[RMDB]
RNA sequence: GGGAACGACUCGAGUAGAGUCGAAAAGAUAUGGAGUAGGAUCACGCGGUAACGUGAGUUCUUUGAUCGUACGGUAUCGGAAACGAUAUUACGGGAGAACUCUACCGCGUGAUCCUACUCCUAAGUCCGUAGGACAUUUGUUCGCAAAUGUCCUACGAAAAGAAACAACAACAACAAC
Reactivity to DMS in 0.01 (KOAc 150mM, MgCl2 10mM, bicine 150mM(pH8.5), 24C), signal-to-noise 4, nucleotides 027 to 126: g000a110u010a300u000g000g010a020g010u000a000g000g010a010u000c000a000c000g010c000g000g010u010a030a200c300g020u020g010a000g020u000u000c000u000u000u000g010a100u010c000g020u010a050c300g020g010u000a000u000c000g010g000a120a110a270c000g000a000u000a020u010u000a020c000g000g000g000a000g000a000a010c000u000c010u000a010c000c000g030c010g020u000g000a000u000c000c000u000a000c000u000c000c010u000a010a060g010u000c050
Structure probing data (DMS) for a 177-nucleotide construct.
DMS adducts were read by reverse transcription with MarathonRT.
The DMS profile rests on 4,101 reads.
Source: RMDB library TTRINS, as collected in RNAgym.